[RMDB]
RNA sequence: GGGAACGACUCGAGUAGAGUCGAAAAGAUAUGGAAACAAUGUAGCCAGAAUCCGUUGAAAUCGGAAACGAUGGAGGAUCUGGUGAGGUUGUUUCCUAAGUCGCAGCUCUGCCUUCGGGCAGAGCAACAUAUAAUCCUUCUUCGGAAGGAUUAUAUGAAAAGAAACAACAACAACAAC
Reactivity to 2A3 in 0.01 (KOAc 150mM, MgCl2 10mM, bicine 150mM(pH8.5), 24C), signal-to-noise 6, nucleotides 027 to 126: g020a010u070a030u180g000g010a010a000a000c010a000a020u300g000u060a010g010c000c010a010g050a170a300u010c020c040g100u210u050g010a020a030a000u010c000g010g020a090a030a030c010g000a010u020g000g040a020g010g010a010u000c000u010g010g000u030g000a010g000g010u000u010g000u010u000u000c000c000u000a030a020g020u020c020g020c140a030g000c000u000c000u010g000c000c020u050u110c300g090g000g000c000a000g000a000g000c000a000a000
Reactivity to DMS in 0.01 (KOAc 150mM, MgCl2 10mM, bicine 150mM(pH8.5), 24C), signal-to-noise 9, nucleotides 027 to 126: g010a040u000a300u010g000g000a010a000a010c000a010a000u000g010u000a300g000c000c000a010g000a090a100u000c000c000g010u000u010g000a120a130a020u000c000g010g000a140a050a160c010g010a010u000g000g000a100g010g010a020u000c000u000g000g010u000g000a050g010g000u000u000g000u000u000u000c000c000u000a010a070g010u000c030g010c230a120g000c000u000c000u000g010c000c000u000u010c230g020g000g020c000a010g000a010g010c010a020a040